[RMDB]
RNA sequence: GGGAACGACUCGAGUAGAGUCGAAAAGCAAACCAUACAAACUGCCCACGCCACGGGUUGUGUAGAUGUGUCUUUCGCCAAAGGCAUUUAAUCCGGCGACGUAACGUUUAUCUUCGACAGGGGCAAAGCUUUAUAUACCCUUCGGGGUAUAUAAAGCAAAAGAAACAACAACAACAAC
Reactivity to DMS in 0.01 (KOAc 150mM, MgCl2 10mM, bicine 150mM(pH8.5), 24C), signal-to-noise 4, nucleotides 027 to 126: g020c160a090a100a140c060c040a080u020a090c120a050a090a090c140u010g000c020c020c020a110c020g010c010c020a060c060g000g000g000u000u000g000u010g020u020a070g000a060u020g010u000g010u010c010u000u000u010c210g040c160c140a050a070a060g000g000c010a020u000u000u010a070a030u000c010c010g000g000c050g000a040c130g020u000a050a050c100g010u000u000u000a050u010c080u000u000c040g000a040c060a080g000g010g020g040c090a040a090a140
Reactivity to 2A3 in 0.01 (KOAc 150mM, MgCl2 10mM, bicine 150mM(pH8.5), 24C), signal-to-noise 2, nucleotides 027 to 126: g060c040a070a060a080c010c010a030u100a110c050a030a110a020c050u060g000c000c000c000a010c010g040c000c010a040c060g040g050g000u000u030g050u020g040u090a070g030a250u130g050u000g010u040c030u040u030u070c110g080c090c050a030a020a020g040g000c020a010u100u100u190a000a030u000c020c000g020g040c040g020a010c020g060u030a040a000c000g000u000u100u100a150u070c050u120u090c050g030a030c030a100g000g020g010g000c000a010a010a010
Chemical mapping of a 177-nucleotide RNA with DMS and 2A3. Reactivities are given for positions 27 through 126. For DMS, 3,178 sequencing reads were counted. Reactivities are rounded to 0.1 and cut off at 0 and 3. For DMS the reverse transcriptase was MarathonRT.